[RMDB]
RNA sequence: GGGAACGACUCGAGUAGAGUCGAAAACAAUGGGAGAAGCUGACUACAGAAUGGCUUGCUAUGCUCAUCUUGGUAAAGCUCUUAUGGACUAUUCUGUUAAUAGAACAGACAUGCUUUACACACCUCCUACUGUUAGUGUUAAUUCUACACUUCAGUCCCAAUAUCCUUCCUUCGGGAAGGAUAUUGGAAAAGAAACAACAACAACAAC
Reactivity to 2A3 in 0.01 (KOAc 150mM, MgCl2 10mM, bicine 150mM(pH8.5), 24C), signal-to-noise 7, nucleotides 027 to 156: c040a020a100u060g010g030g010a060g010a120a020g050c040u040g090a100c050u110a070c110a030g080a110a130u100g040g010c010u040u050g050c030u110a070u160g030c020u030c080a100u040c070u060u070g040g000u030a050a020a020g010c000u050c030u200u190a090u140g030g030a050c030u030a060u080u030c040u050g050u080u050a100a070u090a270g070a060a000c020a000g020a010c020a040u100g000c000u040u030u050a030c100a010c000a020c020c020u000c010c000u000a010c010u020g040u140u040a020g000u010g020u060u050a110a160u300u110c100u090a010c000a000c020u010u020c010a010g020u020c010
Reactivity to DMS in 0.01 (KOAc 150mM, MgCl2 10mM, bicine 150mM(pH8.5), 24C), signal-to-noise 2, nucleotides 027 to 156: c020a150a100u000g000g000g000a080g020a130a100g030c020u010g020a130c050u010a300c010a000g010a090a300u000g010g060c030u020u000g020c020u020a070u000g000c030u000c040a100u000c040u000u000g000g000u000a020a090a050g000c000u000c120u000u000a170u000g000g040a250c020u000a020u000u020c020u000g000u000u010a160a100u000a040g020a020a140c030a040g020a090c040a050u010g000c020u000u000u010a030c040a140c060a090c040c020u020c020c010u010a060c020u000g000u000u000a040g030u000g040u000u000a070a140u020u000c100u000a080c010a030c020u000u000c040a050g010u000c020
Structure probing data (2A3 and DMS) for a 207-nucleotide construct.
The RNA was probed in 150 mM KOAc, 10 mM MgCl2 and 150 mM bicine (pH 8.5) at 24 C.
For DMS the reverse transcriptase was MarathonRT.
It was measured as part of the RMDB library OK3TST.
The DMS profile rests on 2,833 reads.
For 2A3 the reverse transcriptase was SuperScript II with manganese.